[RMDB]
RNA sequence: GGGAACGACUCGAGUAGAGUCGAAAAAACAACGACAACAACAACAACAACCACAAACCAUUUCCACACGUUUUAAUUUAAUUGCUUUUUAAAGAGCACGAGGAAAGACUAAGUUACUCAAAUACAUUUUGUAGACUAUCUGUAAGAAGCAAAAGUAGGUGUAACAACUGUUCGCAGUUGUUACACCAAAAGAAACAACAACAACAAC
Reactivity to 2A3 in 0.01 (KOAc 150mM, MgCl2 10mM, bicine 150mM(pH8.5), 24C), signal-to-noise 1, nucleotides 027 to 156: a000a000c100a020a020c300g120a000c300a100a000c010a030a000c000a000a000c010a010a020c000a080a010c010c000a020c040a070a050a020c020c000a090u040u010u000c000c000a090c060a040c060g000u010u000u090u060a050a170u080u080u120a020a100u050u050g000c000u010u100u000u000u170a060a120a000g080a020g010c060a010c120g030a060g020g070a100a130a000g020a040c090u120a190a040g050u030u130a040c010u000c090a000a160a050u190a080c020a070u030u130u110u110g010u020a010g010a020c010u010a000u160c000u070g010u030a040a000g000a050a000g000c030a060a000a000a000g080u080a080
Overview:
Chemical mapping of a 207-nucleotide RNA with 2A3. The data come from the RNA Mapping Database (RMDB), library OK3TST. The 2A3 profile rests on 598 reads. The RNA was probed in 150 mM KOAc, 10 mM MgCl2 and 150 mM bicine (pH 8.5) at 24 C.